[RMDB]
RNA sequence: GGGAACGACUCGAGUAGAGUCGAAAACGGUAUGGAUACUGGCGACACGUCCCGAUAUCCAGCAACAGGUGCGCGCGAACCCCGAGCUGCUGGGAGCGUUUAUCGAAGAGACGCUGCGUUACGAGCCACACCGUUGCACUUUCGAGUGCAACGGUGUAAAAGAAACAACAACAACAAC
Reactivity to 2A3 in 0.01 (KOAc 150mM, MgCl2 10mM, bicine 150mM(pH8.5), 24C), signal-to-noise 1, nucleotides 027 to 126: c040g020g060u140a020u090g030g040a030u020a230c040u050g010g000c050g010a030c010a000c130g100u020c060c010c000g000a010u050a010u000c010c000a000g060c010a000a070c000a030g080g000u020g040c010g010c020g030c010g090a050a070c120c000c000c020g050a060g010c080u070g020c040u060g010g080g000a030g050c050g000u000u090u070a170u120c110g030a130a050g040a140g020a060c000g040c020u010g000c040g010u030u030a040c060g030a030g100c010c000
Reactivity to DMS in 0.01 (KOAc 150mM, MgCl2 10mM, bicine 150mM(pH8.5), 24C), signal-to-noise 1, nucleotides 027 to 126: c130g000g000u010a030u000g000g000a080u000a040c060u000g010g030c110g030a100c130a130c120g020u000c030c000c030g020a140u000a020u010c030c020a020g030c030a040a040c090a100g010g010u010g040c080g030c020g000c130g020a090a120c050c010c020c030g000a060g010c080u000g000c000u000g010g000g020a050g000c050g020u010u000u000a070u020c060g050a060a100g000a160g010a030c000g040c060u000g020c080g040u000u000a050c090g010a080g050c050c130
Structure probing data (2A3 and DMS) for a 177-nucleotide construct. The data come from the RNA Mapping Database (RMDB), library OK2TST.